Structure probing data (2A3 and DMS) for a 177-nucleotide construct. For 2A3 the reverse transcriptase was SuperScript II with manganese. DMS (dimethyl sulfate) methylates the pairing face of unpaired adenines and cytosines. Values cover nucleotides 27 to 126. The reactions ran in a buffer of 150 mM KOAc, 10 mM MgCl2 and 150 mM bicine (pH 8.5), at 24 C. DMS adducts were read by reverse transcription with MarathonRT.
[RMDB]
RNA sequence: GGGAACGACUCGAGUAGAGUCGAAAACGACGAAGGGGUGCAUUCCGAAGAGCUGGCCUGGCGUCGUCCGGCUCCCUCGACCGCACCGGAGCGCUAGAAAAGGUCCUCGGACUUUCUUCUAUCUCCGCAGUAGUUACAAGUUCGCUUGUAACUACUGAAAAGAAACAACAACAACAAC
Reactivity to 2A3 in 0.01 (KOAc 150mM, MgCl2 10mM, bicine 150mM(pH8.5), 24C), signal-to-noise 3, nucleotides 027 to 126: c020g030a000c010g030a030a010g080g040g010g060u150g100c010a090u210u060c100c060g090a120a020g010a020g050c040u070g050g080c000c010u040g050g030c010g000u030c000g000u030c030c000g020g000c010u020c030c000c000u040c020g040a060c020c030g020c020a010c030c000g000g000a010g000c060g000c020u010a000g010a010a020a000a000g000g010u000c010c010u070c140g030g020a000c000u030u040u020c040u030u000c010u040a300u300c000u010c000c000g020
Reactivity to DMS in 0.01 (KOAc 150mM, MgCl2 10mM, bicine 150mM(pH8.5), 24C), signal-to-noise 4, nucleotides 027 to 126: c030g010a060c060g010a180a060g010g000g000g030u010g000c030a100u000u010c070c120g020a140a090g010a070g010c120u000g010g020c060c010u010g000g010c030g010u000c030g000u000c090c010g010g000c020u000c010c120c010u000c030g000a050c080c030g010c130a100c080c010g000g000a010g000c020g010c020u000a010g000a010a040a040a020g000g000u000c000c020u010c300g020g010a020c010u000u000u000c140u010u000c000u000a020u010c010u000c000c010g000
About this RNA:
The data come from the RNA Mapping Database (RMDB), library VIROID.